An RNA of 207 nucleotides, treated with 2A3 and DMS and read out base by base. DMS adducts were read by reverse transcription with MarathonRT.

RNA sequence: GGGAACGACUCGAGUAGAGUCGAAAAGGAUAAGGGUGCUACGGGUAGCGCCGUUUCCAGUCGUGACCCCAUUUCUUGUGUGGGCUUACCGAAUGUCUCGUCACGUAUCUUGUAAGCACUGGGGAUGACCGGUUCAUACGCCAUUCUUACCCCCUCACCACCCUACAAAAUUCGUUUUGUAGGGUGGAAAAGAAACAACAACAACAAC
Reactivity to 2A3 in 0.01 (KOAc 150mM, MgCl2 10mM, bicine 150mM(pH8.5), 24C), signal-to-noise 4, nucleotides 027 to 156: g020g000a040u100a090a040g090g030g000u010g020c020u060a060c090g120g050g100u070a010g010c020g020c050c000g020u000u020u020c020c000a010g040u050c000g030u040g150a190c000c030c000c010a050u110u170u080c150u240u220g050u020g020u090g100g040g010c010u020u050a060c010c050g070a070a050u080g060u030c030u030c080g190u120c020a020c060g040u040a150u090c060u030u230g020u040a070a030g000c020a040c110u050g010g000g010g000a030u040g020a020c040c050g100g010u090u070c030a040u080a120c050g070c050c000a020u020u020c000u020u100a120c000c010c010c010c030u010c000a030
Reactivity to DMS in 0.01 (KOAc 150mM, MgCl2 10mM, bicine 150mM(pH8.5), 24C), signal-to-noise 2, nucleotides 027 to 156: g010g010a080u010a070a080g030g020g050u000g010c030u000a100c100g010g010g030u000a070g000c060g000c000c000g010u000u000u000c010c010a090g000u000c020g030u000g000a300c020c000c030c040a240u000u000u000c050u000u000g020u000g020u000g030g020g030c050u020u010a120c030c140g000a060a040u000g020u000c030u000c160g000u000c060a050c040g020u000a090u000c020u010u020g010u000a040a030g020c020a070c100u000g020g030g030g020a060u000g000a030c060c060g010g000u000u000c120a130u010a100c100g010c020c010a090u000u000c020u000u000a110c020c000c000c010c010u000c040a230
2A3 adducts were read by reverse transcription with SuperScript II with manganese. The DMS profile rests on 4,958 reads. Reactivities are given for positions 27 through 156.